[RMDB]
RNA sequence: GGGAACGACUCGAGUAGAGUCGAAAAACUUGAAAUCAGAAAAAGCACAACCUGAAGAUCUUGAUGGAAAGUGGUAUUGUGGUAACAGGUUCGAGGACUGCGUUUUUCGCGCGGACAGAGCUUAUGCGACUACAGUCCAAUUCGUUGGACUGUAGUCAAAAGAAACAACAACAACAAC
Reactivity to 2A3 in 0.01 (KOAc 150mM, MgCl2 10mM, bicine 150mM(pH8.5), 24C), signal-to-noise 2, nucleotides 027 to 126: a000c010u040u050g030a030a080a030u110c050a030g230a080a160a060a060a020g100c030a030c030a050a050c000c040u070g050a060a010g000a090u090c060u120u160g020a030u050g050g030a060a030a050g000u030g000g020u100a140u070u130g030u070g090g020u020a060a030c060a080g010g040u010u060c040g040a100g100g140a140c000u000g020c000g000u030u010u020u100u270c090g010c000g000c020g050g000a010c010a020g020a000g030c040u090u030a050u150g070c020
Reactivity to DMS in 0.01 (KOAc 150mM, MgCl2 10mM, bicine 150mM(pH8.5), 24C), signal-to-noise 5, nucleotides 027 to 126: a040c020u000u010g000a160a170a040u010c070a070g000a050a040a090a110a120g000c040a050c090a070a210c120c040u000g000a110a080g000a060u000c040u000u010g040a080u000g000g010a070a040a080g030u000g000g010u010a080u000u000g010u000g020g000u000a030a160c090a050g000g000u000u000c060g020a160g000g000a100c040u000g000c040g010u000u000u000u010u000c200g010c020g010c020g010g000a100c070a110g000a050g000c040u010u010a070u000g020c270
An RNA of 177 nucleotides, treated with 2A3 and DMS and read out base by base. It was measured as part of the RMDB library OK2TST. The 2A3 profile rests on 1,600 reads. The RNA was probed in 150 mM KOAc, 10 mM MgCl2 and 150 mM bicine (pH 8.5) at 24 C.